[RMDB]
This 207-nucleotide RNA was probed chemically with 2A3 and DMS. High 2A3 reactivity points to a flexible backbone, as in loops and unpaired stretches. It was measured as part of the RMDB library RNAMAK. 2A3 adducts were read by reverse transcription with SuperScript II with manganese. The reactions ran in a buffer of 150 mM KOAc, 10 mM MgCl2 and 150 mM bicine (pH 8.5), at 24 C.

RNA sequence: GGGAACGACUCGAGUAGAGUCGAAAAUCCUAAGUCUUCCUUGGACCUACACCGCCCACCAGGCUAGCUUAUUCGGAAACGAAUAAGCUUGGACCCUGGUGUAACAAGUGUAGCUAGGAAGAUAUGGAAAAUCUUGCCACCUUCGGGUGGCAAGAAACACUAGUAUAAAGUUCGCUUUAUACUAGUGAAAAGAAACAACAACAACAAC
Reactivity to 2A3 in 0.01 (KOAc 150mM, MgCl2 10mM, bicine 150mM(pH8.5), 24C), signal-to-noise 2, nucleotides 027 to 156: u010c000c000u020a080a050g030u000c000u000u000c000c000u090u120g090g140a190c020c010u010a010c010a000c000c030g060c010c010c000a000c010c000a000g020g000c010u000a000g000c010u000u000a000u000u000c010g050g040a110a120a130c000g000a000a020u000a000a010g030c010u000u060g020g030a040c030c000c000u000g000g000u000g000u010a030a050c050a100a080g000u010g010u010a010g000c000u000a000g010g000a000a000g000a000u050a060u010g030g010a010a090a040a080u020c000u000u000g000c000c000a000c000c000u040u050c120g130g000g000u000g000g000c000a010a000g000a000a010a000
Reactivity to DMS in 0.01 (KOAc 150mM, MgCl2 10mM, bicine 150mM(pH8.5), 24C), signal-to-noise 1, nucleotides 027 to 156: u000c000c000u000a070a160g010u000c010u030u000c000c000u000u000g030g010a090c160c000u010a030c010a030c000c050g010c250c110c000a040c020c000a030g000g010c040u000a000g010c000u000u000a000u000u020c000g000g000a250a170a300c010g030a020a000u000a010a000g010c000u000u000g050g010a080c300c010c000u000g040g020u000g050u000a060a070c050a120a060g030u000g000u000a020g030c040u010a020g000g010a060a000g050a030u000a060u010g010g000a090a090a120a090u010c000u000u000g020c000c000a010c030c000u000u030c300g020g040g020u000g000g000c010a010a010g000a030a080a180